Structure probing data (2A3 and DMS) for a 177-nucleotide construct. For DMS, 2,679 sequencing reads were counted. 2A3 adducts were read by reverse transcription with SuperScript II with manganese. DMS adducts were read by reverse transcription with MarathonRT.
[RMDB]
RNA sequence: GGGAACGACUCGAGUAGAGUCGAAAAGAUAUGGACCUGUACUCUUUGUCAAGCAUCGAUCUCGGAAACGAGGGAGCUUGACCAAGAAAGGCAGGUCCUAAGUCAAACGCAUGGUUCGCCAUGCGAACAACAAUGACUCCUUCGGGAGUCAUUGUUGAAAAGAAACAACAACAACAAC
Reactivity to 2A3 in 0.01 (KOAc 150mM, MgCl2 10mM, bicine 150mM(pH8.5), 24C), signal-to-noise 2, nucleotides 027 to 126: g000a010u100a030u180g000g010a000c010c000u000g020u030a040c020u030c000u060u000u000g010u000c000a010a000g030c020a240u300c040g110a140u020c020u000c020g050g040a090a060a050c020g010a000g010g000g000a010g010c000u000u000g010a000c010c000a010a000g030a070a040a020g050g000c000a000g000g000u000c000c000u000a000a000g000u000c000a000a000a080c020g000c010a000u000g020g080u030u070c230g000c100c000a000u010g000c000g000a050a040
Reactivity to DMS in 0.01 (KOAc 150mM, MgCl2 10mM, bicine 150mM(pH8.5), 24C), signal-to-noise 3, nucleotides 027 to 126: g010a030u010a300u000g000g010a010c000c000u000g010u000a030c000u000c000u000u000u000g000u000c010a000a010g020c010a280u000c190g000a050u020c000u010c000g000g010a130a070a240c020g020a020g000g000g000a020g020c010u000u010g000a000c010c040a000a000g000a010a030a020g000g000c000a000g010g010u000c000c010u010a020a060g000u000c040a100a120a230c000g000c000a020u010g010g010u010u010c210g020c020c000a010u000g000c010g000a070a110